Record summary
Chemical mapping of a 207-nucleotide RNA with 2A3. Conditions: 150 mM KOAc, 10 mM MgCl2 and 150 mM bicine (pH 8.5), 24 C. For 2A3 the reverse transcriptase was SuperScript II with manganese. Source: RMDB library VIROID, as collected in RNAgym.
[RMDB]
RNA sequence: GGGAACGACUCGAGUAGAGUCGAAAAGAACCGCUUUUUCUCUAUCUUCCUUGCUUCGGGGCGAGGGUGUUUAGCCCUUGGAACCGCAGUUGGUUCCUCGGAACUAAACUCGUGGUUCCUGUGGUUCACACCUGACCUCCUGAGCAGAAAAGAAAAAUCGUUAUAAUGGCUUCGGCCAUUAUAACGAAAAAGAAACAACAACAACAAC
Reactivity to 2A3 in 0.01 (KOAc 150mM, MgCl2 10mM, bicine 150mM(pH8.5), 24C), signal-to-noise 1, nucleotides 027 to 156: g080a040a060c050c010g110c110u060u090u050u090u050c070u010c050u110a170u080c020u040u090c010c030u070u130g000c000u030u060c030g000g000g000g000c010g020a010g010g000g000u000g000u000u070u100a010g000c000c010c000u030u080g010g000a000a000c000c000g030c010a010g000u010u020g020g020u000u000c000c010u020c170g060g010a000a000c000u100a300a000a070c010u030c140g020u000g000g000u000u000c020c000u020g010u100g010g000u030u040c030a000c010a000c000c010u020g030a030c000c000u010c000c000u000g020a000g000c000a000g020a000a130a010a000g100a000a050a020a000a040